[RMDB]
RNA sequence: GGGAACGACUCGAGUAGAGUCGAAAAACCAUCCUAUUCGUAGGAUGGUGCACCAUUGCCGAUUGUAUAUAAUACCGCAGGCGGAAAAGCCGUUCAAAUAAGGAACUUGUCAGUUCGCUGACAAGAAAUACGAGGUAGAAUUCGUUCUACCUCGUAUAAAAGAAACAACAACAACAAC
Reactivity to DMS in 0.01 (KOAc 150mM, MgCl2 10mM, bicine 150mM(pH8.5), 24C), signal-to-noise 6, nucleotides 027 to 126: a030c000c000a010u000c000c000u000a010u010u000c150g030u000a010g000g010a010u000g000g000u010g010c170a200c010c000a110u010u010g020c020c020g000a170u010u010g010u010a040u010a100u000a120a080u010a050c040c130g010c080a150g010g020c020g010g010a060a070a070a070g020c030c030g010u000u010c080a060a080a090u020a090a110g010g000a100a140c000u000u000g000u000c000a010g000u000u010c210g020c010u010g000a010c010a000a010g010a050a070
Reactivity to 2A3 in 0.01 (KOAc 150mM, MgCl2 10mM, bicine 150mM(pH8.5), 24C), signal-to-noise 4, nucleotides 027 to 126: a000c000c000a010u000c000c000u010a030u030u090c280g070u070a000g000g000a000u000g000g000u010g000c020a050c040c010a110u020u200g070c010c010g080a060u070u050g100u020a060u020a020u020a220a220u040a060c010c010g020c080a050g000g020c000g000g010a090a170a020a010g060c020c010g040u070u130c130a130a110a070u150a170a120g070g010a050a060c010u000u010g000u010c000a010g010u000u120c190g010c070u000g000a000c010a000a000g020a020a060
The data come from the RNA Mapping Database (RMDB), library M2PK50. Structure probing data (DMS and 2A3) for a 177-nucleotide construct. Conditions: 150 mM KOAc, 10 mM MgCl2 and 150 mM bicine (pH 8.5), 24 C. For DMS the reverse transcriptase was MarathonRT.